Background:
This 207-nucleotide RNA was probed chemically with 2A3. 2A3 adducts were read by reverse transcription with SuperScript II with manganese. The reactions ran in a buffer of 150 mM KOAc, 10 mM MgCl2 and 150 mM bicine (pH 8.5), at 24 C. Values cover nucleotides 27 to 156.

RNA sequence: GGGAACGACUCGAGUAGAGUCGAAAACGUCCGAUGCGGAAGUUCGUGCUUCCUUCGAACGCGAAAGUCGGACGGCGGCCAUGAGUCGCAACGCAAAGCCGCGGCAAGUGGAGUUAGCGAGAAGAGAAAAAGUCACGAGUGUUCGCACUCGUGACAAGUAGCCCAUCUAGUUCGCUAGAUGGGCUACAAAAGAAACAACAACAACAAC
Reactivity to 2A3 in 0.01 (KOAc 150mM, MgCl2 10mM, bicine 150mM(pH8.5), 24C), signal-to-noise 2, nucleotides 027 to 156: c000g020u000c000c000g000a010u080g100c070g050g040a080a030g030u060u200c040g060u170g080c090u040u100c000c040u080u040c060g020a110a020c040g000c000g090a050a100a030g000u000c000g000g000a010c010g030g010c010g060g000c000c000a130u180g000a010g010u010c000g000c020a100a070c080g050c130a140a130a060g070c080c050g010c020g030g030c050a060a000g010u030g050g080a060g020u200u120a000g010c020g050a080g040a160a080g080a020g030a010a120a000a020a070g000u010c010a000c020g000a000g000u000g000u030u130c260g000c070a000c000u020c010g000u000g000a000c000a000a000